[RMDB]
RNA sequence: GGGAACGACUCGAGUAGAGUCGAAAAGAGAGAGUCAUGGAUCUUAUUUAUGUGUAGAUUCAUUUCAGUCAGAAGUAUUAGGACUGGUUUAUUUGAGAAAGUAAAUAGAUCAUUACAAAUUCAUCGUCAUACUUCAAGGAAAAUUCAUUGAUGACACCCACGAUAGAGCUUUCGAGCUCUAUCGUGGAAAAGAAACAACAACAACAAC
Reactivity to 2A3 in 0.01 (KOAc 150mM, MgCl2 10mM, bicine 150mM(pH8.5), 24C), signal-to-noise 2, nucleotides 027 to 156: g090a000g000a000g000a000g020u010c030a020u030g050g050a010u020c020u130u120a140u100u120u080a090u280g080u060g100u100a050g010a030u060u000c020a010u040u040u040c010a020g020u020c030a020g010a090a000g090u030a030u080u200a170g050g090a040c030u020g060g000u020u000u010a070u050u030u040g080a040g030a000a100a050g030u130a020a030a040u030a020g000a000u060c010a030u020u070a060c020a050a170a160u080u140c020a130u030c010g080u000c030a020u000a080c000u050u030c050a080a040g140g060a100a070a000a150u180u140c060a020u030u160g030a000u070g020a000c030a030c010